[RMDB]
Structure probing data (DMS and 2A3) for a 207-nucleotide construct. The RNA was probed in 150 mM KOAc, 10 mM MgCl2 and 150 mM bicine (pH 8.5) at 24 C. Values are in units of 0.01, from 0 to 300, in steps of 10.
RNA sequence: GGGAACGACUCGAGUAGAGUCGAAAAUGAAGCAAAUCCAUAAUUGCCAAUGAUGAGCAAUUCGCUAUUGCCGCCUAAAAACGGUUAGCCGGGGCUGCUAGCGCCUUGUUACCAAAGAUAGCCGGCGUUACGGCAUGAUGGUUCGCCAUCAUGCCAAGCGUGAAUGUUAGUUCGCUAACAUUCACGCAAAAGAAACAACAACAACAAC
Reactivity to DMS in 0.01 (KOAc 150mM, MgCl2 10mM, bicine 150mM(pH8.5), 24C), signal-to-noise 1, nucleotides 027 to 156: u010g010a140a110g000c010a060a090a120u000c030c060a070u000a030a060u010u020g020c000c050a060a150u000g000a130u000g010a100g000c010a030a060u000u000c100g030c000u000a040u010u010g010c000c020g000c000c020u000a060a050a110a120a040c050g020g040u000u000a050g030c030c040g010g000g020g030c090u000g010c020u000a070g010c030g040c010c000u030u010g010u010u000a060c030c040a050a070a150g000a150u000a040g000c010c300g010g000c030g010u000u000a080c190g030g020c000a010u000g000a010u000g020g040u000u000c300g040c010c000a010u000c000a020u010g020c020c000a060a030
Reactivity to 2A3 in 0.01 (KOAc 150mM, MgCl2 10mM, bicine 150mM(pH8.5), 24C), signal-to-noise 3, nucleotides 027 to 156: u130g010a070a020g040c040a050a060a070u050c020c010a060u090a120a030u060u040g010c020c020a100a160u250g070a140u060g020a110g030c000a000a030u050u030c040g010c020u030a020u130u170g000c000c010g000c000c010u100a120a060a010a020a020c020g000g000u050u030a020g050c020c010g000g000g010g030c010u040g010c030u050a010g010c000g050c000c000u040u060g020u060u040a070c030c050a090a000a060g050a030u050a030g090c050c040g020g000c010g020u030u090a040c080g010g000c000a000u000g000a000u000g010g020u030u060c080g040c070c010a000u000c000a000u000g010c000c000a000a000

The DMS profile rests on 1,890 reads.